RNA sequence: GGGAACGACUCGAGUAGAGUCGAAAAACGUCGCGGUCGCCGCUGUGGGUUUUCGCAACCAGUACGACGCGGCGCUGGGGCCGGGCAGCGCGGUGGCAUGCCUUCGGUCCUCGCUGUCGUUUCUGCGGCUGGCCUUCGCGGGCGGCGUCGACGCCGCACGACAGAGUCAAUUCGUUGACUCUGUCGUAAAAGAAACAACAACAACAAC
Reactivity to 2A3 in 0.01 (KOAc 150mM, MgCl2 10mM, bicine 150mM(pH8.5), 24C), signal-to-noise 1, nucleotides 027 to 156: a000c030g030u060c000g020c030g060g000u010c020g020c010c010g030c060u080g060u150g060g020g000u040u060u070u170c190g010c020a040a040c000c000a050g040u070a030c050g010a010c020g020c070g060g010c000g010c010u050g020g010g000g000c000c000g010g040g000c050a020g000c000g000c060g150g130u140g170g020c060a120u040g010c000c000u110u170c040g000g000u000c000c000u010c000g000c020u110g100u160c010g010u020u090u040c020u020g010c000g030g000c060u060g020g010c000c000u050u040c020g000c010g020g070g000c000g000g000c000g020u270c150g020a130c170g000c000c010g000c000
Chemical mapping of a 207-nucleotide RNA with 2A3. For 2A3 the reverse transcriptase was SuperScript II with manganese. For 2A3, 1,644 sequencing reads were counted. The reactions ran in a buffer of 150 mM KOAc, 10 mM MgCl2 and 150 mM bicine (pH 8.5), at 24 C.